[RMDB]
The record gives the reactivity of an RNA of 207 nucleotides to 2A3 and DMS. The reactions ran in a buffer of 150 mM KOAc, 10 mM MgCl2 and 150 mM bicine (pH 8.5), at 24 C. The 2A3 profile rests on 6,658 reads. For 2A3 the reverse transcriptase was SuperScript II with manganese.

RNA sequence: GGGAACGACUCGAGUAGAGUCGAAAAUCACCAGAUGCUGCAUCACCUGAUCACUGAUGGCUCAACGGUAUCCGGCGGUACAACUGAAUACUUGUAGCUGCCUUUUGAGGGGGUUGGCUGCAAUCCGAAAAGAGGACACACUUCGGUGUGUCCUCAACCAGAUUUAUACGUUCGCGUAUAAAUCUGGAAAAGAAACAACAACAACAAC
Reactivity to 2A3 in 0.01 (KOAc 150mM, MgCl2 10mM, bicine 150mM(pH8.5), 24C), signal-to-noise 6, nucleotides 027 to 156: u070c020a030c030c010a010g020a050u040g000c020u020g040c010a010u020c010a020c020c010u060g050a070u050c040a020c060u030g020a030u050g070g000c060u060c100a080a070c030g000g020u020a030u010c020c020g030g000c020g020g060u120a070c040a120a030c110u150g050a150a080u090a140c040u020u040g010u030a010g020c020u010g010c010c000u060u060u070u110g160a170g000g050g030g000g000u180u280g050g000c000u010g000c010a000a050u050c060c020g050a060a060a030a030g010a000g000g000a000c000a010c000a000c000u050u080c180g070g000u000g000u000g000u010c000c000u000c000a000a000
Reactivity to DMS in 0.01 (KOAc 150mM, MgCl2 10mM, bicine 150mM(pH8.5), 24C), signal-to-noise 2, nucleotides 027 to 156: u000c030a080c020c020a040g010a030u010g050c020u000g040c040a180u000c090a060c020c030u030g000a150u020c150a140c160u010g000a070u000g010g000c010u000c020a150a080c020g000g000u000a020u000c020c020g030g040c000g060g000u000a090c100a100a120c030u040g000a070a120u000a070c040u010u020g020u000a030g010c000u000g010c020c010u030u000u000u000g000a190g020g030g040g010g040u010u000g030g000c000u030g030c000a050a130u020c020c040g020a090a090a150a180g000a020g010g010a010c010a030c000a020c000u000u000c290g060g030u010g010u000g010u000c000c000u000c010a000a030